[RMDB]
RNA sequence: GGGAACGACUCGAGUAGAGUCGAAAAUGUGUGCUCGACAGCCUCCCUGUCCGACAGAGCUUUUAGAUCUUCUGAUCUUUCCCUGGAGGAUAUCGCUUAUGCUUCAAGCGAUUCUCGGAAUAAUUAACUAUAGUAAUGAUUUCGAUCAUUACUAUAGAAAAGAAACAACAACAACAAC
Reactivity to 2A3 in 0.01 (KOAc 150mM, MgCl2 10mM, bicine 150mM(pH8.5), 24C), signal-to-noise 8, nucleotides 027 to 126: u110g050u000g030u050g040c060u010c020g020a010c010a020g020c020c020u040c000c000c010u010g020u040c050c040g010a020c010a030g100a030g050c000u020u010u020u020a010g000a010u020c010u260u050c130u300g000a020u000c000u010u020u000c010c000c000u020g100g020a030g030g020a080u040a020u120c010g000c010u040u040a080u280g100c050u110u160c110a010a000g000c000g010a010u020u010c010u000c010g030g050a130a070u240a120a090u210u120a070a050
Reactivity to DMS in 0.01 (KOAc 150mM, MgCl2 10mM, bicine 150mM(pH8.5), 24C), signal-to-noise 9, nucleotides 027 to 126: u010g020u000g010u000g010c070u000c040g010a070c050a050g000c090c050u000c090c120c030u000g000u000c020c030g020a070c060a070g010a140g010c080u000u000u000u000a020g010a020u000c000u010u010c270u010g010a010u000c000u000u000u000c000c000c000u010g010g010a070g000g000a040u010a030u000c010g020c000u000u000a090u010g010c170u000u010c120a040a020g010c000g010a020u000u000c010u000c000g010g000a100a080u010a070a090u000u010a050a190
Description:
The data come from the RNA Mapping Database (RMDB), library M2PK90. The record gives the reactivity of an RNA of 177 nucleotides to 2A3 and DMS. Reactivities are given for positions 27 through 126. For 2A3 the reverse transcriptase was SuperScript II with manganese. The DMS profile rests on 26,855 reads. For DMS the reverse transcriptase was MarathonRT.